[RMDB]
RNA sequence: GGGAACGACUCGAGUAGAGUCGAAAAGCCUUUGAAUUAGGAGUUCUUAGGGUUCGUUAUUUCCUUUACAUGCUUUUUGUUGGGGUGGGAUGGGUUUUAUAGCAUGUGUUUAAUUUAUAAGAGCCAAGGACGAACUUGGGUUCGCCUAAGUUCGUCCAAAAGAAACAACAACAACAAC
Reactivity to DMS in 0.01 (KOAc 150mM, MgCl2 10mM, bicine 150mM(pH8.5), 24C), signal-to-noise 1, nucleotides 027 to 126: g000c010c000u000u020u060g000a070a090u040u020a040g010g010a150g020u000u010c030u010u000a100g000g000g040u000u000c080g010u010u000a080u000u020u010c060c020u000u010u030a020c000a020u020g000c010u000u040u010u000u030g000u000u030g000g030g000g000u070g000g010g010a100u010g000g000g000u000u020u030u010a010u000a000g010c020a010u000g020u000g000u010u040u000a040a070u050u020u010a070u010a030a100g020a040g000c150c170a090a150